[RMDB]
RNA sequence: GGGAACGACUCGAGUAGAGUCGAAAAUGUCGGUCCCCCCGCAACGAUUACCCGUCAACCUGGUCAGGUCCGGAAGGAAGCAGCCACAGCGGGAACAUCGUGUGCCGGGGUGUGGCUGGCGGGGCAAAAGUACCUGCCUAGUUCGCUAGGCAGGUACGUAGUAUAUUAUGUUCGCAUAAUAUACUACAAAAGAAACAACAACAACAAC
Reactivity to 2A3 in 0.01 (KOAc 150mM, MgCl2 10mM, bicine 150mM(pH8.5), 24C), signal-to-noise 2, nucleotides 027 to 156: u140g000u000c010g000g020u020c010c010c000c000c000c000g020c000a000a000c000g000a000u010u030a030c000c010c000g050u080c050a060a060c000c050u010g010g020u110c010a000g020g030u000c000c010g000g050a030a030g010g000a000a020g000c000a000g010c000c000a020c020a010g040c010g000g000g010a000a010c020a010u010c010g000u200g120u040g150c130c060g000g000g010g020u020g030u130g000g000c010u010g000g000c000g010g010g030g000c050a030a050a040a080g000u000a000c000c000u000g000c000c000u000a010g010u030u080c200g020c140u000a000g000g000c020a000g010g000u000a000c010
Reactivity to DMS in 0.01 (KOAc 150mM, MgCl2 10mM, bicine 150mM(pH8.5), 24C), signal-to-noise 2, nucleotides 027 to 156: u030g040u010c000g030g030u010c000c000c000c000c010c010g000c080a070a020c030g000a060u030u000a300c010c000c010g010u000c060a190a240c120c040u000g040g020u000c000a300g000g020u010c020c010g010g040a130a270g020g020a050a040g040c010a300g010c010c000a030c120a300g030c020g000g020g000a020a200c110a080u010c040g000u000g050u000g030c050c050g040g030g000g020u000g010u000g020g000c000u010g010g020c040g000g040g000g060c180a050a090a050a170g020u000a010c000c000u000g010c020c000u000a010g010u000u020c300g020c000u000a010g000g000c000a060g000g000u000a010c010

This 207-nucleotide RNA was probed chemically with 2A3 and DMS. Values cover nucleotides 27 to 156. The DMS profile rests on 2,914 reads. 2A3 adducts were read by reverse transcription with SuperScript II with manganese. Reactivities are rounded to 0.1 and cut off at 0 and 3.